[RMDB]
RNA sequence: GGGAACGACUCGAGUAGAGUCGAAAACGGUGAUUCGUCACCGCCUUACCGUAGGCGAACUCGUCUUUUGACGGAUCGGGAGAAUUCGAAAGAGUUCUUCUCUAGCGUGUCCGAUAAGACGGUUCGCCUAAACGGAAUCGAAGGGUUUCGACCCUAAACUUGUAACUCAUUUCGAUGAGUUACAAGUAAAAGAAACAACAACAACAAC
Reactivity to DMS in 0.01 (KOAc 150mM, MgCl2 10mM, bicine 150mM(pH8.5), 24C), signal-to-noise 2, nucleotides 027 to 156: c010g040g000u000g010a040u000u000c300g030u000c000a000c000c010g000c020c050u000u010a100c000c010g010u000a060g010g030c030g040a020a010c000u000c030g040u000c000u010u000u000u000g010a260c040g040g010a020u000c030g000g000g000a010g000a030a010u000u000c000g010a180a160a300g000a020g000u000u000c000u000u000c030u010c030u000a150g020c140g010u010g050u000c010c020g040a130u000a010a050g020a060c010g010g020u000u000c010g000c010c010u000a000a010a050c020g000g000a060a060u000c030g010a190a110g000g010g000u000u000u010c100g000a140c000c010c010u000a030a090
Reactivity to 2A3 in 0.01 (KOAc 150mM, MgCl2 10mM, bicine 150mM(pH8.5), 24C), signal-to-noise 4, nucleotides 027 to 156: c010g000g020u010g020a040u060u110c230g050u040c150a010c010c010g000c000c010u030u110a100c000c010g020u030a000g020g000c020g020a000a010c090u120c290g010u010c000u000u090u060u110g160a100c010g020g000a020u040c020g000g000g000a000g000a000a000u030u000c020g050a060a100a040g020a060g000u010u000c010u060u000c070u010c050u060a070g120c100g140u260g050u030c020c000g040a060u000a060a000g010a010c000g000g000u000u000c000g000c010c010u000a000a000a000c000g000g090a030a010u190c160g080a070a040g030g010g020u050u150u210c210g120a160c000c000c000u030a120a130